Notes: Chemical mapping of a 207-nucleotide RNA with 2A3. The reactions ran in a buffer of 150 mM KOAc, 10 mM MgCl2 and 150 mM bicine (pH 8.5), at 24 C. 2A3 adducts were read by reverse transcription with SuperScript II with manganese.
RNA sequence: GGGAACGACUCGAGUAGAGUCGAAAAGCGUACUACUAGUCAAAACAGAGCUUGGAUUUACGGUUGUCAGGGAUCCCAAAUAGGAUCCCUUGGAUUUACCGUUGUCAGCUCUGUUUAGACUAGUAUCGCAAAAGCCAUGGCGUUCGCGCCAUGGCAACCUGCUGUACUUCUUCGGAAGUACAGCAGGAAAAGAAACAACAACAACAAC
Reactivity to 2A3 in 0.01 (KOAc 150mM, MgCl2 10mM, bicine 150mM(pH8.5), 24C), signal-to-noise 2, nucleotides 027 to 156: g000c000g030u100a080c020u000a000c000u000a020g000u010c000a020a000a030a000c000a000g000a000g030c000u210u230g200g040a090u280u190u150a000c010g010g050u010u000g000u030c010a020g000g020g030a000u060c000c010c040a160a300a130u300a130g000g000a000u000c000c060c000u010u110g010g000a000u030u020u270a000c000c000g000u000u010g000u000c000a000g000c000u000c020u000g000u000u000u000a000g020a000c000u000a000g000u000a000u010c000g000c000a150a000a000a000g010c020c000a000u010g010g000c010g070u040u060c200g040c020g000c100c000a000u000g000g010c000a020a000